Chemical mapping of a 207-nucleotide RNA with 2A3. Reactivities are given for positions 27 through 156.

RNA sequence: GGGAACGACUCGAGUAGAGUCGAAAAGAAAGAAAGAAUCCUGCACAUUGUGUGGCCAUUCAAAUCCAGUAACACUUAUUCUGAGCUCCUGUGGAAAAUAUCUGGAAAGCUUGUCCUUCCUGCCCUAUUAAAUGAUGAAAGGUACAAAUGAAAAAAACAGGGUAAAUUUAUUCGUAAAUUUACCCUGAAAAGAAACAACAACAACAAC
Reactivity to 2A3 in 0.01 (KOAc 150mM, MgCl2 10mM, bicine 150mM(pH8.5), 24C), signal-to-noise 2, nucleotides 027 to 156: g060a000a040a000g010a010a020a030g010a000a020u070c010c000u070g030c010a000c000a200u170u090g030u050g030u030g110g070c010c000a050u100u000c030a000a000a050u000c000c030a010g010u070a100a050c020a020c100u100u100a100u100u020c030u110g070a030g000c010u010c000c000u050g020u050g100g040a040a030a060a000u080a100u070c010u000g000g000a060a060a000g040c030u070u150g000u070c000c000u020u020c000c000u050g000c000c000c000u070a100u130u090a040a050a090u100g020a000u060g060a010a000a030g170g050u300a010c150a130a010a020u300g000a010a300a040a000a300a000a000
The data come from the RNA Mapping Database (RMDB), library OK3TST. The reactions ran in a buffer of 150 mM KOAc, 10 mM MgCl2 and 150 mM bicine (pH 8.5), at 24 C.